The record gives the reactivity of an RNA of 207 nucleotides to 2A3 and DMS.
RNA sequence: GGGAACGACUCGAGUAGAGUCGAAAACAGCAAAAAGGAACCGAUUCCCACCAAGUUCGGAAAGAGAUACAGGGCGAGGCGCUGAAGAAAGAAUCUCGCUUCAGACACCCCAAGGACUCGACUGAAGAAUGCACGCCAUCGUUCGCGAUGGCGUGAAGAAGGUUAUACUGUUCGCAGUAUAACCUUCAAAAGAAACAACAACAACAAC
Reactivity to 2A3 in 0.01 (KOAc 150mM, MgCl2 10mM, bicine 150mM(pH8.5), 24C), signal-to-noise 2, nucleotides 027 to 156: c020a000g130c010a020a020a150a060a040g120g020a110a000c040c060g030a060u040u010c000c000c000a010c000c030a040a070g030u020u030c020g030g030a070a130a070g020a020g010a010u050a060c010a000g010g000g030c060g080a040g080g000c130g040c130u040g020a020a040g020a040a290a010g060a100a120u030c080u020c150g000c000u010u010c010a000g030a050c020a100c040c000c020c050a030a070g040g000a040c010u040c030g030a040c040u090g010a040a010g070a110a080u170g060c010a000c000g000c000c000a000u030c020g080u140u040c140g000c000g140a010u010g000g000c000g000u000g000a010a000
Reactivity to DMS in 0.01 (KOAc 150mM, MgCl2 10mM, bicine 150mM(pH8.5), 24C), signal-to-noise 1, nucleotides 027 to 156: c030a200g030c070a070a080a040a070a190g020g010a130a140c050c010g010a170u000u020c000c000c000a190c160c010a150a140g000u000u000c020g000g020a130a090a100g030a110g010a140u010a090c000a080g000g000g000c030g000a070g000g010c020g010c000u020g000a050a040g010a020a080a090g000a060a090u020c100u000c040g020c000u000u000c020a000g000a300c010a070c040c000c000c010a090a190g010g020a090c060u000c000g010a180c030u020g000a080a070g030a100a070u000g060c020a000c000g000c000c000a030u000c010g000u000u000c300g000c010g000a020u000g020g000c000g000u010g010a000a060
For DMS, 1,611 sequencing reads were counted. It was measured as part of the RMDB library M2RFPK.